An RNA of 177 nucleotides, treated with 2A3 and read out base by base. The data come from the RNA Mapping Database (RMDB), library OK1LIB.
RNA sequence: GGGAACGACUCGAGUAGAGUCGAAAAAGUAACGAAUACGUUUCUUAGUCCCGUCUUUAAGUGUAUUCGUGGUAUUGCUUGCUGCCAUAGGUGCGCCACAUUGGGGACAGUGAAUAAUGCCUGUAAGCUGCGUGCUUUCGUUCGCGAAAGCACGCAGAAAAGAAACAACAACAACAAC
Reactivity to 2A3 in 0.01 (KOAc 150mM, MgCl2 10mM, bicine 150mM(pH8.5), 24C), signal-to-noise 1, nucleotides 027 to 126: a000g020u080a000a000c000g000a100a000u210a090c000g000u000u000u200c010u000u000a070g010u070c000c000c020g030u170c210u110u280u200a220a030g060u000g000u100a000u000u100c030g000u070g130g000u150a130u110u040g000c000u000u040g000c060u000g000c000c000a040u090a210g030g030u100g110c040g000c010c000a130c060a150u000u190g130g000g000g000a100c060a070g030u010g060a130a080u100a110a030u240g010c000c010u060g070u070a020a020g010